[RMDB]
RNA sequence: GGGAACGACUCGAGUAGAGUCGAAAAUGUAUUUUUAUAGAGAUGGCUUCUUACUGUGUUGCCCAGGCUGGUCUUGAACUCCUGGGCUCAAGCAUUUCCCAACAACUGUAGCCUUCCAAAGUGCUGGGAUGACAGGCAUGAGCCACUGCACCUGGCCCAUAUCACAGCGGUUCGCCGCUGUGAUAUGAAAAGAAACAACAACAACAAC
Reactivity to 2A3 in 0.01 (KOAc 150mM, MgCl2 10mM, bicine 150mM(pH8.5), 24C), signal-to-noise 1, nucleotides 027 to 156: u010g030u040a300u050u110u030u070u100a210u280a110g050a010g030a050u020g010g000c040u020u040c040u140u000a080c100u050g030u020g020u290u060g000c050c050c080a030g030g000c160u100g000g000u010c040u120u300g060a090a060c050u090c000c000u000g000g000g000c030u040c000a000a000g000c000a050u000u000u050c000c000c000a040a090c050a050a000c120u090g040u180a010g040c000c000u010u000c030c070a070a000a000g000u030g050c010u040g000g050g020a150u010g020a070c030a010g010g010c000a000u170g060a020g000c010c050a070c000u000g000c010a020c000c000u000g020g040c010c000
Record summary: This 207-nucleotide RNA was probed chemically with 2A3. Values are in units of 0.01, from 0 to 300, in steps of 10. Reactivities are given for positions 27 through 156. The reactions ran in a buffer of 150 mM KOAc, 10 mM MgCl2 and 150 mM bicine (pH 8.5), at 24 C.